[RMDB]
RNA sequence: GGGAACGACUCGAGUAGAGUCGAAAAAAUGGAAUUCAAGGGGAACAACUUCGGUCUCAGCACUUUAAUUAUUCUUCUCGUUCCCACCUAAUUUCGCAAUUUAUUGUCCUUGACUUCUACCACGAGAACGCUUUUUCUAAUUCGUUAGAAAAAGCGUAAAAGAAACAACAACAACAAC
Reactivity to 2A3 in 0.01 (KOAc 150mM, MgCl2 10mM, bicine 150mM(pH8.5), 24C), signal-to-noise 9, nucleotides 027 to 126: a000a010u180g000g010a010a010u030u010c010a020a010g010g000g010g030a040a060c020a040a030c070u090u070c040g040g020u030c030u020c050a020g020c030a040c030u070u070u080a110a100u100u130a130u150u100c030u080u030c040u010c030g010u010u010c020c000c000a040c010c010u100a090a120u050u110u100c050g000c050a030a060u050u120u100a090u080u160g090u040c000c000u000u030g010a010c000u020u000c010u040a060c010c030a080c080g030a040g020a050
Reactivity to DMS in 0.01 (KOAc 150mM, MgCl2 10mM, bicine 150mM(pH8.5), 24C), signal-to-noise 4, nucleotides 027 to 126: a090a090u030g010g000a040a030u000u000c030a010a010g000g000g000g000a080a020c200a040a090c120u010u000c030g010g000u000c020u000c030a110g000c050a060c030u020u020u020a040a080u010u020a080u030u000c020u020u000c060u010c010g010u000u010c010c010c000a080c180c080u030a080a040u010u000u000c060g000c100a040a030u020u000u000a100u020u000g000u000c000c000u020u010g010a020c050u000u000c010u000a060c030c040a080c090g000a100g010a130